Chemical mapping of a 207-nucleotide RNA with 2A3. The RNA was probed in 150 mM KOAc, 10 mM MgCl2 and 150 mM bicine (pH 8.5) at 24 C. Source: RMDB library OK3TST, as collected in RNAgym. 2A3 is a SHAPE reagent: it acylates the 2'-hydroxyl of flexible nucleotides of all four kinds.
[RMDB]
RNA sequence: GGGAACGACUCGAGUAGAGUCGAAAACUGUGCAAUAGGAACUCAGAGAACAGGCCCUGGGCCAGCAUCACUGAUUGCUGAGUGUUCUCAGGCUCCUCCCUGCCACUUCUGACCUGUUUCCCCACUCGUGACCUGGGGGCAAGUAUUUCAAUGCUGCCAUAGUCGGGCAGUUCGCUGCCCGACUAUGAAAAGAAACAACAACAACAAC
Reactivity to 2A3 in 0.01 (KOAc 150mM, MgCl2 10mM, bicine 150mM(pH8.5), 24C), signal-to-noise 1, nucleotides 027 to 156: c030u030g030u060g060c020a120a200u080a210g000g030a030a030c040u040c150a060g020a010g000a040a010c000a020g070g040c070c030c150u150g010g040g040c000c020a010g020c000a010u080c010a060c220u220g060a200u100u090g000c010u020g010a090g070u060g020u020u000c000u010c010a000g010g000c050u020c020c000u000c030c000c000u050g040c010c060a080c000u180u130c080u080g170a120c060c030u050g070u030u050u110c000c000c020c060a010c020u170c030g100u070g040a130c020c010u040g000g000g010g020g010c020a070a000g050u040a080u000u140u030c080a040a030u090g000c000u040g040c000